Annotation:
Conditions: 150 mM KOAc, 10 mM MgCl2 and 150 mM bicine (pH 8.5), 24 C. An RNA of 177 nucleotides, treated with 2A3 and DMS and read out base by base. Source: RMDB library OK2TST, as collected in RNAgym. For 2A3 the reverse transcriptase was SuperScript II with manganese.

RNA sequence: GGGAACGACUCGAGUAGAGUCGAAAAUUGUACACCGAGAACAGCGGCGAAGCCUCCGACAACACGCCCCAGGUGGCGACAUUGAUGAUAUGGCCGUCGCCACGCUCGAGCAUCCCGGGUGCAAGCCAAGUGAAUAUACAUUCGUGUAUAUUCACUUAAAAGAAACAACAACAACAAC
Reactivity to 2A3 in 0.01 (KOAc 150mM, MgCl2 10mM, bicine 150mM(pH8.5), 24C), signal-to-noise 9, nucleotides 027 to 126: u040u020g020u030a040c110a130c060c020g000a010g010a120a030c040a020g030c020g040g000c020g040a070a010g020c010c020u010c030c020g060a040c020a090a020c010a020c050g030c010c000c000c020a060g050g100u060g030g010c010g020a020c020a050u110u190g050a090u060g030a050u110a090u270g080g020c040c030g020u000c000g000c000c000a010c010g000c000u030c030g010a020g020c010a030u030c010c010c000g020g000g000u020g000c030a040a020g040c010c010
Reactivity to DMS in 0.01 (KOAc 150mM, MgCl2 10mM, bicine 150mM(pH8.5), 24C), signal-to-noise 9, nucleotides 027 to 126: u000u000g020u000a070c050a150c040c010g010a060g010a070a110c100a100g010c050g010g010c030g000a180a150g010c020c010u000c070c030g000a070c070a040a080c140a100c100g010c030c010c010c110a130g010g030u000g000g010c010g000a020c060a100u010u000g010a120u010g010a110u010a070u010g010g010c070c110g010u000c010g010c000c010a040c070g010c020u000c080g010a090g010c070a120u000c010c010c010g010g000g010u000g000c100a050a070g010c040c050